This 177-nucleotide RNA was probed chemically with DMS and 2A3. For 2A3, 36,464 sequencing reads were counted. Conditions: 150 mM KOAc, 10 mM MgCl2 and 150 mM bicine (pH 8.5), 24 C. The data come from the RNA Mapping Database (RMDB), library TTRDES. For DMS, 22,459 sequencing reads were counted.

RNA sequence: GGGAACGACUCGAGUAGAGUCGAAAAAAGAUAUGGAUGUCCGAACUACUGUACGCGAGGUUCGCAUCGAUCUUCUUUCGGAAACGAAAGAAGGGAGCGAACCUCACAGCGGACAUCCUAAGUCAAAGUAUAACGUAAAGUUCGCUUUACGUUAUACAAAAGAAACAACAACAACAAC
Reactivity to DMS in 0.01 (KOAc 150mM, MgCl2 10mM, bicine 150mM(pH8.5), 24C), signal-to-noise 9, nucleotides 027 to 126: a100a070g010a040u010a300u010g000g010a020u000g010u000c010c000g010a090a060c100u020a300c070u000g010u000a120c230g030c240g010a010g010g020u000u000c010g030c010a300u000c210g010a060u010c010u000u000c000u000u000u000c010g000g000a080a080a120c000g010a010a000a010g010a010a010g000g000g000a020g020c000g010a010a010c000c000u000c000a000c000a040g000c010g000g010a010c010a010u000c000c000u000a010a100g010u000c020a100a110a180
Reactivity to 2A3 in 0.01 (KOAc 150mM, MgCl2 10mM, bicine 150mM(pH8.5), 24C), signal-to-noise 8, nucleotides 027 to 126: a000a000g080a040u070a040u130g010g000a000u000g000u000c010c010g050a140a050c150u300a060c030u300g050u180a070c180g090c140g300a010g000g000u010u000c000g000c030a270u300c080g120a140u010c000u000u000c000u000u000u010c010g010g030a090a080a070c010g000a000a000a010g010a000a000g000g000g010a020g000c000g000a000a000c000c000u000c000a000c000a000g000c000g000g010a000c000a000u000c000c000u000a080a030g020u000c020a020a040a140